[RMDB]
RNA sequence: GGGAACGACUCGAGUAGAGUCGAAAAAUAAAUUAUCUAAGUCUAAGACCUUGUUGCGCGCUAACAAGGGCGCAUGGACGAAGACAGAACCUCCAUACUUAGACAAGCGCGAACCAAACAAAAAAAAACAUAAGGCUAAGUUCGCUUAGCCUUAUGUAAAAGAAACAACAACAACAAC
Reactivity to DMS in 0.01 (KOAc 150mM, MgCl2 10mM, bicine 150mM(pH8.5), 24C), signal-to-noise 1, nucleotides 027 to 126: a140u010a090a050a260u000u000a150u010c030u000a030a170g020u000c070u000a020a100g000a030c010c000u020u000g000u000u000g030c020g010c010g000c030u000a200a030c020a010a000g010g010g010c030g010c160a020u000g000g000a020c040g000a140a030g050a130c300a040g000a080a090c040c040u010c000c030a080u010a110c050u000u000a050g000a160c180a120a030g020c040g010c000g000a090a110c040c090a110a020a140c070a020a030a000a020a040a070a060a060
Reactivity to 2A3 in 0.01 (KOAc 150mM, MgCl2 10mM, bicine 150mM(pH8.5), 24C), signal-to-noise 1, nucleotides 027 to 126: a010u180a010a010a030u180u210a030u070c020u030a060a010g000u000c010u060a280a070g020a050c000c000u000u020g000u000u060g070c030g000c000g010c050u020a030a010c000a010a000g020g000g000c010g000c000a020u160g040g000a010c050g000a040a000g040a020c040a050g140a080a120c000c020u080c040c030a110u080a080c000u060u040a010g040a130c070a110a020g010c000g020c020g010a000a060c000c060a050a080a050c220a170a100a040a000a000a020a030a000